The record gives the reactivity of an RNA of 207 nucleotides to DMS and 2A3. The reactions ran in a buffer of 150 mM KOAc, 10 mM MgCl2 and 150 mM bicine (pH 8.5), at 24 C. Source: RMDB library OK3TST, as collected in RNAgym. Values are in units of 0.01, from 0 to 300, in steps of 10. Values cover nucleotides 27 to 156. For DMS, 13,778 sequencing reads were counted.

RNA sequence: GGGAACGACUCGAGUAGAGUCGAAAAUACAAAUAUGUCUGCCGCACGAAAAGUACUGUUUCCCAUCCAACACAUUGAUCUGUGGGCUUCUUAUAAACAGGCGUUGGAUUGCAUGUGGAAAGUGGAAGAGGUGGAUCUAUCCAAAGACUACGACGACAGAUAGUAAGUUAUUCGUAACUUACUAUCUAAAAGAAACAACAACAACAAC
Reactivity to DMS in 0.01 (KOAc 150mM, MgCl2 10mM, bicine 150mM(pH8.5), 24C), signal-to-noise 5, nucleotides 027 to 156: u000a120c050a080a090a140u000a110u010g010u000c030u000g020c030c010g020c020a070c090g010a070a070a080a110g020u000a070c070u010g010u000u010u000c010c000c010a170u010c060c040a050a080c030a030c030a110u000u010g010a090u010c060u010g020u000g020g020g040c050u000u010c050u010u010a150u000a070a060a080c070a060g020g020c030g030u000u000g000g010a100u000u000g020c070a060u000g020u000g010g010a040a050a110g020u000g010g010a060a070g010a060g020g020u000g010g010a090u000c050u000a090u010c050c030a090a080a120g000a120c030u000a070c060g020a050c050g020a090c130
Reactivity to 2A3 in 0.01 (KOAc 150mM, MgCl2 10mM, bicine 150mM(pH8.5), 24C), signal-to-noise 8, nucleotides 027 to 156: u130a020c040a020a090a020u190a080u130g030u000c020u030g040c020c020g030c020a030c040g060a060a070a010a020g060u060a070c060u050g070u040u030u020c010c000c010a010u000c010c010a040a030c020a010c010a100u080u170g040a070u100c030u030g040u040g050g050g000c000u110u050c020u060u190a140u120a080a110a000c020a020g010g040c020g060u020u030g010g010a020u010u110g030c060a030u080g020u060g040g050a080a050a040g050u050g020g040a050a040g030a040g050g020u030g020g010a030u000c020u060a080u010c020c020a030a060a030g040a030c030u070a050c080g120a010c030g020a010c010